Record summary
The record gives the reactivity of an RNA of 177 nucleotides to DMS.

RNA sequence: GGGAACGACUCGAGUAGAGUCGAAAAGAUAUGGACUAGUACUUCGAUAAGCUUGGGUCGGAAACGACCCAAAGCUUUUGACGAAGGACCGUCCUAAGUCAAAUCUCAUCCCUUCGGGGAUGAGAAAGUUAAUUGAAGUCUUCGGACUUCAAUUAACAAAAGAAACAACAACAACAAC
Reactivity to DMS in 0.01 (KOAc 150mM, MgCl2 10mM, bicine 150mM(pH8.5), 24C), signal-to-noise 3, nucleotides 027 to 126: g020a040u000a260u010g010g000a020c010u010a080g010u000a070c000u010u000c000g010a150u000a010a030g020c000u000u000g010g010g020u000c000g000g000a060a040a170c010g020a020c000c000c000a010a010a030g020c000u000u000u000u000g010a190c110g000a020a020g000g000a070c280c180g000u000c000c000u000a050a080g000u000c030a080a140a170u000c000u000c000a000u000c000c000c000u000u010c240g020g000g010g000a000u000g000a000g010a010a020a050
Notes:
Reactivities are given for positions 27 through 126. For DMS the reverse transcriptase was MarathonRT.